[RMDB]
RNA sequence: GGGAACGACUCGAGUAGAGUCGAAAAGUCAUGUUUCGACAUGACAAAAAACCUUUGUGCGAUGACUUCUUUUGACGGCUUGGGUGUGACCCAUUGGGUCACAUUAAGCCGAUAAGAAGCAUCGCACUCUGGUAAAAAAAGUGAGUUCGCUCACUAAUCCGUGUAUCAGGUUCGCCUGAUACACGGAAAAAGAAACAACAACAACAAC
Reactivity to 2A3 in 0.01 (KOAc 150mM, MgCl2 10mM, bicine 150mM(pH8.5), 24C), signal-to-noise 2, nucleotides 027 to 156: g000u000c000a000u030g040u010u150u100c090g010a050c000a000u020g030a010c090a000a210a000a000a000a000c010c000u020u000u010g020u000g000c060g030a040u040g180a300c000u000u000c010u050u080u050u090g210a150c020g000g000c020u020u060g180g080g020u000g000u000g000a000c000c000c130a300u250u300g000g000g000u000c000a000c000a000u000u010a000a000g020c000c000g000a000u000a000a000g000a000a000g040c000a000u000c000g040c000a000c000u000c000u000g000g000u180a210a040a000a000a000a000a000g020u030g000a000g000u060u210c180g070c090u000c000a010c020u160a030a290